Chemical mapping of a 177-nucleotide RNA with 2A3 and DMS. The data come from the RNA Mapping Database (RMDB), library M2PK90.

RNA sequence: GGGAACGACUCGAGUAGAGUCGAAAAUUAUUGAGCGUAGAUGUCUCUGUCACGAUACGAGUAAGUGACUCUCGUGUACUACUGGCGAAUGAGACAGAGACAUUAUAAGCUCGUGCCAGUCAAUAAAGACGAUUAAAGUUUUCGAACUUUAAUCGUCAAAAGAAACAACAACAACAAC
Reactivity to 2A3 in 0.01 (KOAc 150mM, MgCl2 10mM, bicine 150mM(pH8.5), 24C), signal-to-noise 3, nucleotides 027 to 126: u140u090a040u030u180g020a010g040c080g010u110a040g030a230u000g010u000c000u000c000u000g010u000c020a000c110g030a020u060a110c020g000a020g030u070a130a110g070u090g210a030c010u030c010u030c050g060u060g030u070a090c040u010a010c030u050g160g000c040g020a100a100u160g020a050g000a090c000a000g000a000g000a000c000a010u020u000a010u000a030a000g000c000u000c010g010u020g010c000c020a070g050u070c030a050a060u090a230a110a020
Reactivity to DMS in 0.01 (KOAc 150mM, MgCl2 10mM, bicine 150mM(pH8.5), 24C), signal-to-noise 4, nucleotides 027 to 126: u010u010a070u000u010g000a020g020c010g010u000a180g000a020u000g010u000c000u000c000u010g010u000c000a100c060g010a110u010a100c020g010a040g020u000a030a080g010u010g000a070c060u000c110u000c160g010u010g020u000a040c040u000a040c030u000g000g010c040g010a110a090u010g010a080g010a040c000a000g000a020g010a010c000a000u000u000a040u000a070a260g010c000u000c020g020u000g000c040c030a140g000u010c140a020a110u000a070a100a150